[RMDB]
This 177-nucleotide RNA was probed chemically with DMS and 2A3.

RNA sequence: GGGAACGACUCGAGUAGAGUCGAAAAGAGCUAAUACAUGCUAAAAACCUCGACUUCGGAAGGGGUGUAUUUAUUAGAUAAAAAACCAAUGCCCUUCGGGGCUCCUUGGUGAUUCAUGAUAACUUAACGUGACAUAUUACUUCGGUAAUAUGUCACGAAAAGAAACAACAACAACAAC
Reactivity to DMS in 0.01 (KOAc 150mM, MgCl2 10mM, bicine 150mM(pH8.5), 24C), signal-to-noise 4, nucleotides 027 to 126: g030a150g010c000u000a000a020u000a020c060a010u010g010c050u040a070a110a090a140a120c000c000u000c010g000a290c020u010u020c190g010g020a030a300g000g000g010g000u000g000u010a000u020u000u000a030u000u020a060g000a100u060a000a040a090a090a070a020c010c000a030a040u020g010c000c010c000u000u030c170g040g000g010g000c010u000c060c080u000u000g000g000u000g000a140u020u000c120a080u020g000a100u030a030a070c040u020u000a020a190
Reactivity to 2A3 in 0.01 (KOAc 150mM, MgCl2 10mM, bicine 150mM(pH8.5), 24C), signal-to-noise 3, nucleotides 027 to 126: g040a010g000c010u000a010a020u010a040c030a060u050g020c030u140a120a080a040a080a080c010c000u020c010g020a030c040u110u060c170g110g030a030a030g000g010g000g010u040g010u000a020u000u050u010a020u000u050a030g030a080u250a080a130a020a020a010a010c000c000a010a010u080g000c000c000c000u010u040c140g010g010g010g010c020u020c000c010u010u000g010g020u040g030a050u050u130c050a020u060g070a090u040a200a070c020u050u020a060a020

The RNA was probed in 150 mM KOAc, 10 mM MgCl2 and 150 mM bicine (pH 8.5) at 24 C. The data come from the RNA Mapping Database (RMDB), libraries RFM100 and RFMREP.